[RMDB]
This 207-nucleotide RNA was probed chemically with DMS and 2A3.
Values cover nucleotides 27 to 156.
Conditions: 150 mM KOAc, 10 mM MgCl2 and 150 mM bicine (pH 8.5), 24 C.
The data come from the RNA Mapping Database (RMDB), library M2RFPK.

RNA sequence: GGGAACGACUCGAGUAGAGUCGAAAAAUACAUUCCUGUGCCGGCAAUACAGUGUGUAUGGAGGUCUCAAUGGCUCGGAAGUGCCAGCAAACCGGCGUAGAUAUUAGCAGAUGUAUGGGCGUAAGACAAAAGAGAAUGAUGUUCGCAUCAUUCUCAAGUACCAAGUAGAGUUCGCUCUACUUGGUACAAAAGAAACAACAACAACAAC
Reactivity to DMS in 0.01 (KOAc 150mM, MgCl2 10mM, bicine 150mM(pH8.5), 24C), signal-to-noise 2, nucleotides 027 to 156: a090u010a030c030a080u000u000c300c010u000g020u000g020c030c040g050g000c010a050a090u010a050c050a060g010u000g040u010g000u000a010u010g020g010a100g030g010u000c040u010c050a120a110u000g020g010c010u000c000g020g010a170a100g030u000g000c000c010a080g030c080a040a090a050c020c020g030g030c010g050u000a040g040a110u000a060u020u000a100g000c040a080g000a070u010g020u000a050u000g000g030g030c060g020u010a040a110g000a120c110a060a050a100a230g010a020g000a050a010u000g000a020u010g030u010u010c300g000c010a010u000c000a020u010u000c000u000c010a010a110
Reactivity to 2A3 in 0.01 (KOAc 150mM, MgCl2 10mM, bicine 150mM(pH8.5), 24C), signal-to-noise 4, nucleotides 027 to 156: a000u100a020c030a040u060u060c020c010u020g020u060g020c020c030g020g030c060a050a060u070a090c040a080g100u050g010u010g000u180a060u050g060g020a020g040g070u000c030u010c050a040a140u050g010g000c030u040c080g070g000a090a040g020u030g060c030c000a040g070c070a040a040a050c010c010g010g000c010g030u040a020g020a110u060a060u180u190a030g040c030a010g000a060u050g020u040a080u070g050g000g000c030g010u030a030a040g080a070c060a040a080a000a030g000a000g000a000a000u000g000a000u000g020u030u060c160g020c080a000u000c000a000u000u000c010u000c000a000a010

For 2A3, 2,860 sequencing reads were counted.